[RMDB]
RNA sequence: GGGAACGACUCGAGUAGAGUCGAAAAAAAAAGAUAUGGACGAUUAUCGCUCCUUGGAUUUAUGAAACAUAUCGGAAACGAUAUGGAGUACGUUGUCAGGAGCGUAAGAUCGUCCUAAGUCAAAAAACUAGUAAUAGGAGUUCGCUCCUAUUACUAGAAAAGAAACAACAACAACAAC
Reactivity to 2A3 in 0.01 (KOAc 150mM, MgCl2 10mM, bicine 150mM(pH8.5), 24C), signal-to-noise 2, nucleotides 027 to 126: a000a010a010a020a050g060a040u120a020u160g010g010a010c000g000a010u020u010a080u140c000g000c000u010c000c000u020u100g200g030a060u230u300u250a070u190g050a010a020a010c000a000u010a000u030c010g000g040a020a040a050c000g000a000u000a000u020g010g020a000g030u020a030c070g010u010u030g060u040c030a010g000g010a000g040c010g000u000a010a080g010a000u000c000g010u020c010c000u000a010a010g010u000c010a050a000a030a050a080a080
Reactivity to DMS in 0.01 (KOAc 150mM, MgCl2 10mM, bicine 150mM(pH8.5), 24C), signal-to-noise 3, nucleotides 027 to 126: a030a050a040a080a060g000a030u000a300u010g000g010a000c000g010a020u010u000a300u010c000g010c000u010c000c000u010u000g020g000a040u000u000u000a020u000g000a180a110a110c020a030u000a000u000c000g010g010a100a090a160c010g000a000u010a010u000g010g020a110g000u000a050c230g000u000u010g000u010c010a020g000g000a020g010c000g010u000a020a110g000a020u010c000g010u000c000c000u000a020a080g000u030c030a000a060a040a050a060a130

Conditions: 150 mM KOAc, 10 mM MgCl2 and 150 mM bicine (pH 8.5), 24 C.
An RNA of 177 nucleotides, treated with 2A3 and DMS and read out base by base.
The DMS profile rests on 2,872 reads.
2A3 adducts were read by reverse transcription with SuperScript II with manganese.
For DMS the reverse transcriptase was MarathonRT.